The record gives the reactivity of an RNA of 177 nucleotides to 2A3 and DMS. Reactivities are given for positions 27 through 126. High DMS reactivity at an A or C suggests that its Watson-Crick edge is free.
RNA sequence: GGGAACGACUCGAGUAGAGUCGAAAACUAACACGGCUAAAAAUUGCACAGAAGGCAUAUAGCCCGGCAAUUCAUAGAUGGUUUUGCCGGUUUUAUCGGAUAAAACAAUCGUAGGGGUGGAUUGGACGAUCUUCCAAGGAUUCGUCCUUGGAAGAUCAAAAGAAACAACAACAACAAC
Reactivity to 2A3 in 0.01 (KOAc 150mM, MgCl2 10mM, bicine 150mM(pH8.5), 24C), signal-to-noise 1, nucleotides 027 to 126: c030u030a030a020c070a010c080g050g000c020u090a010a000a060a000a220u010u090g050c040a050c010a070g210a150a040g080g000c020a010u120a010u080a190g020c000c000c040g000g000c010a010a010u000u010c030a060u090a230g150a070u160g040g000u000u020u020u000g000c000c000g000g030u050u050u040u090a010u020c000g020g010a030u090a150a060a000a020c020a070a000u070c000g050u080a050g000g050g000g050u050g010g020a070u020u050g000g040a040c050
Reactivity to DMS in 0.01 (KOAc 150mM, MgCl2 10mM, bicine 150mM(pH8.5), 24C), signal-to-noise 2, nucleotides 027 to 126: c030u000a050a090c120a080c130g010g020c040u010a040a050a070a110a090u000u010g000c010a060c120a080g030a160a110g020g000c010a080u010a070u010a130g000c200c000c090g000g010c000a010a020u000u010c030a040u030a100g010a080u000g010g020u000u000u010u010g000c000c010g010g000u020u000u020u000a040u020c100g010g010a080u020a020a040a020a010c030a030a040u010c050g000u000a050g020g010g010g020u000g010g000a100u000u000g020g030a120c090